[RMDB]
RNA sequence: GGGAACGACUCGAGUAGAGUCGAAAAUAUUACGCUGCAGCUUGGGAGGCGGCUCUCCCCAGGCGGCGUCCGCGGAGACACGCAUCCGUGAACCCCAGGUCCCGGGCCGCCGGCUCGCCGCGAUAAACGAAGUAGGAGUAUUCGUACUCCUACUUCGAAAAGAAACAACAACAACAAC
Reactivity to 2A3 in 0.01 (KOAc 150mM, MgCl2 10mM, bicine 150mM(pH8.5), 24C), signal-to-noise 2, nucleotides 027 to 126: u160a010u090u130a030c030g000c010u030g010c020a050g030c020u100u150g110g090g040a070g000g040c060g040g030c020u000c010u020c020c000c000c000a070g060g050c070g010g010c070g010u000c020c000g000c010g090g010a070g030a040c130a030c250g080c050a060u010c020c010g000u020g050a060a070c010c000c020c010a020g000g030u030c030c050c050g000g010g000c010c000g000c010c000g010g000c010u030c060g030c010c000g000c010g030a070u130a050a070a020
Reactivity to DMS in 0.01 (KOAc 150mM, MgCl2 10mM, bicine 150mM(pH8.5), 24C), signal-to-noise 4, nucleotides 027 to 126: u020a090u010u010a080c040g020c020u000g010c010a050g020c020u000u000g020g020g000a130g020g010c040g000g000c040u000c030u020c050c030c010c120a100g010g010c070g020g010c130g010u000c050c020g020c010g010g000a050g000a140c140a070c160g000c110a090u000c010c000g030u000g020a040a100c010c010c020c030a160g000g000u000c010c080c040g000g010g010c010c020g010c020c010g000g020c030u000c110g020c010c050g010c020g000a100u010a040a100a170